Overview:
The record gives the reactivity of an RNA of 207 nucleotides to 2A3. Source: RMDB library M2RFPK, as collected in RNAgym. The 2A3 profile rests on 1,264 reads. The RNA was probed in 150 mM KOAc, 10 mM MgCl2 and 150 mM bicine (pH 8.5) at 24 C.

RNA sequence: GGGAACGACUCGAGUAGAGUCGAAAAACGCUUCACAAUGUGCGGCAAAGAAACAUUGUUUAUGCAACGGCACUUCGCAAUGUGUGCUCAAACAUUGCUUAUUCAAACACGCUUCACAAUGUGCGACAAAACUUCACGGUCUUCGGACCGUGAAGAAGAGGUCUAUCCAGUUCGCUGGAUAGACCUCAAAAGAAACAACAACAACAAC
Reactivity to 2A3 in 0.01 (KOAc 150mM, MgCl2 10mM, bicine 150mM(pH8.5), 24C), signal-to-noise 3, nucleotides 027 to 156: a010c000g010c000u000u000c000a000c000a000a020u010g000u030g000c000g050g020c090a040a090a160g080a010a030a000c000a010u010u010g170u040u090u050a110u100g020c040a080a060c070g060g000c010a000c010u050u010c060g000c030a020a050u050g030u000g040u010g050c110u120c140a080a050a000c010a010u020u000g010c020u100u090a130u180u180c060a020a030a040c040a020c070g050c020u140u230c050a050c030a100a070u170g030u040g020c030g020a060c100a010a070a020a030c010u000u000c000a000c010g000g010u000c000u020u080c070g090g000a000c000c010g000u000g000a000a000g000a000a000